[RMDB]
RNA sequence: GGGAACGACUCGAGUAGAGUCGAAAAGAUAUGGAGUCGGGUAACAUGGCAACAGCUAAGCUCGGAAACGAGCUUAGACAUGCCAAACCCAGACUCCUAAGUCAAAAGUAUGCCGUUCGCGGCAUACCCAACGCUCUCAGUUCGCUGAGAGCGUUGGAAAAGAAACAACAACAACAAC
Reactivity to DMS in 0.01 (KOAc 150mM, MgCl2 10mM, bicine 150mM(pH8.5), 24C), signal-to-noise 1, nucleotides 027 to 126: g000a000u000a300u020g000g030a000g020u020c000g000g000g020u020a050a170c300a170u030g010g030c030a150a130c260a120g020c010u000a000a000g020c010u000c000g000g000a120a040a100c040g010a000g030c010u000u000a000g000a040c130a250u000g040c000c010a040a020a090c040c000c000a200g000a010c000u000c000c000u000a030a080g010u000c020a040a040a120a210g000u000a000u020g020c010c000g000u020u010c190g020c020g000g020c000a000u000a000c000
Chemical mapping of a 177-nucleotide RNA with DMS.
For DMS, 647 sequencing reads were counted.
The RNA was probed in 150 mM KOAc, 10 mM MgCl2 and 150 mM bicine (pH 8.5) at 24 C.